[RMDB]
RNA sequence: GGGAACGACUCGAGUAGAGUCGAAAAGAUAUGGAUGCGGAGAGCGAUAAGAUGCGGUCGGAAACGACCGGCAUCUUUUGACGCUUUAAGCAUCCUAAGUCAAAGGCCUCAAGUUCGCUUGAGGCCAGAUGCAGGAUUAGUUCGCUAAUCCUGCAUCAAAAGAAACAACAACAACAAC
Reactivity to 2A3 in 0.01 (KOAc 150mM, MgCl2 10mM, bicine 150mM(pH8.5), 24C), signal-to-noise 2, nucleotides 027 to 126: g000a000u050a010u130g020g010a000u010g010c030g020g050a050g000a020g070c040g020a030u090a290a020g000a000u000g030c020g000g000u000c000g000g000a060a020a010c000g000a000c010c000g020g060c010a000u000c000u010u020u010u040g030a020c020g000c020u020u010u010a020a010g000c000a010u000c000c000u000a000a000g010u010c040a090a110a140g000g020c020c000u000c000a020a020g010u080u200c300g100c200u000u000g010a010g030g000c000c000a010
Reactivity to DMS in 0.01 (KOAc 150mM, MgCl2 10mM, bicine 150mM(pH8.5), 24C), signal-to-noise 3, nucleotides 027 to 126: g000a050u000a290u010g010g010a000u000g010c000g000g010a140g010a010g020c000g010a150u010a020a010g010a020u000g010c000g000g000u000c010g010g000a050a070a130c010g010a010c000c010g020g030c000a000u000c000u000u000u010u000g020a190c100g030c010u000u000u000a130a180g000c010a000u000c000c000u000a000a100g000u010c010a090a160a140g000g000c000c000u000c000a010a010g010u000u010c300g030c000u000u000g000a010g000g010c010c000a000